[RMDB]
RNA sequence: GGGAACGACUCGAGUAGAGUCGAAAACGGACAACAAUUGUCCUAGCUCAAGGCAGAACGGGUCGAAGGAGUCCACAUAAGUCAGUGGUGGUGGGAGCCCCUGUUGGGGGCGCUAUACCACAGCCGUUACGACCGUUCUAUUCGUAGAACGGUCGUAAAAAGAAACAACAACAACAAC
Reactivity to DMS in 0.01 (KOAc 150mM, MgCl2 10mM, bicine 150mM(pH8.5), 24C), signal-to-noise 1, nucleotides 027 to 126: c190g010g000a000c000a010a290c180a070a090u020u050g030u000c000c030u010a090g000c010u000c000a090a180g000g130c040a070g000a070a020c120g000g020g000u000c060g000a110a210g000g030a160g040u000c000c040a080c080a130u000a210a050g000u090c020a030g000u000g000g070u000g120g000u000g000g000g000a250g030c000c000c000c030u000g020u000u040g040g010g000g000g040c010g000c130u000a090u090a070c000c000a000c000a080g030c000c000g000u080
Reactivity to 2A3 in 0.01 (KOAc 150mM, MgCl2 10mM, bicine 150mM(pH8.5), 24C), signal-to-noise 2, nucleotides 027 to 126: c030g000g000a010c030a120a030c050a150a180u300u080g000u000c000c000u010a040g000c000u000c020a040a070g060g000c070a000g030a060a020c000g040g000g040u110c020g010a040a050g000g080a020g000u000c000c000a050c020a020u130a140a030g090u100c070a050g030u070g080g010u010g040g020u060g000g010g040a040g000c000c000c000c000u200g160u300u200g080g000g000g000g000c000g000c010u070a050u010a030c040c000a000c000a000g000c000c010g010u010